[RMDB]
RNA sequence: GGGAACGACUCGAGUAGAGUCGAAAAAAAGAAUAUCUACCCUGUGGAAAUAGAAAACUGUCGUAAAUCAUAUAUGGUCACAUUGCGUAAUAAAAGGCAAAGACUAUGAACACACAGGCAAUGGAAAUCAUUAGGUGGAUUUCGAUCCACCUAAUGAAAAAGAAACAACAACAACAAC
Reactivity to 2A3 in 0.01 (KOAc 150mM, MgCl2 10mM, bicine 150mM(pH8.5), 24C), signal-to-noise 1, nucleotides 027 to 126: a050a000a000g080a110a030u080a050u100c000u000a000c080c000c000u000g010u030g000g080a100a160a020u060a100g060a060a100a020a050c080u060g050u170c040g090u140a080a050a030u130c020a010u050a010u000a010u260g030g050u070c030a030c010a120u050u120g000c030g010u030a020a140u030a140a150a020a000g050g000c030a100a000a000g010a000c020u010a010u040g020a020a060c060a010c000a000c000a120g000g010c000a000a030u010g010g000a020a070a000
Reactivity to DMS in 0.01 (KOAc 150mM, MgCl2 10mM, bicine 150mM(pH8.5), 24C), signal-to-noise 2, nucleotides 027 to 126: a050a020a040g000a170a090u000a080u010c010u000a030c160c000c000u010g020u000g020g010a100a160a070u020a080g000a120a110a110a110c150u000g000u000c030g000u010a070a120a070u010c070a030u000a120u000a080u030g020g010u010c210a040c060a170u000u000g000c080g010u010a120a100u000a090a050a130a100g000g000c000a000a020a050g000a150c010u000a000u000g000a080a120c190a090c010a010c000a000g000g000c080a050a020u000g000g000a050a070a120